[RMDB]
RNA sequence: GGGAACGACUCGAGUAGAGUCGAAAACAGUGUAGGCCGGGAGUUGAGACUGGUGUGUGUUUAGUGGAUUAUCUGAUCAGCACAUGUGUGACAGUGUUGAUCACAAGUCAUUGCCAGCUCUGUUCAUCUAGUUAGAGGUAUUCGUACCUCUAACUAGAAAAGAAACAACAACAACAAC
Reactivity to DMS in 0.01 (KOAc 150mM, MgCl2 10mM, bicine 150mM(pH8.5), 24C), signal-to-noise 5, nucleotides 027 to 126: c080a060g010u010g010u000a050g010g020c040c030g010g010g000a100g020u000u000g000a050g010a090c040u010g010g000u000g020u010g020u000g000u000u000u000a090g030u010g000g000a070u000u000a080u010c140u000g000a010u000c000a000g000c000a000c010a090u000g030u000g020u000g010a070c070a060g010u000g000u000u010g000a020u000c000a020c080a050a080g010u010c020a050u000u000g000c020c010a030g010c040u000c020u000g000u000u000c070a130u000
Reactivity to 2A3 in 0.01 (KOAc 150mM, MgCl2 10mM, bicine 150mM(pH8.5), 24C), signal-to-noise 4, nucleotides 027 to 126: c030a000g060u040g050u170a060g040g000c020c020g060g000g030a070g020u120u110g060a030g020a100c030u030g020g040u030g020u010g000u000g030u030u120u120a140g000u100g090g050a090u090u040a080u160c030u040g010a000u000c000a000g000c000a040c090a180u060g060u040g070u130g120a040c030a040g020u000g000u010u000g010a000u010c000a000c000a010a020g010u030c010a030u000u090g040c010c000a000g010c030u040c010u030g050u050u070c030a060u010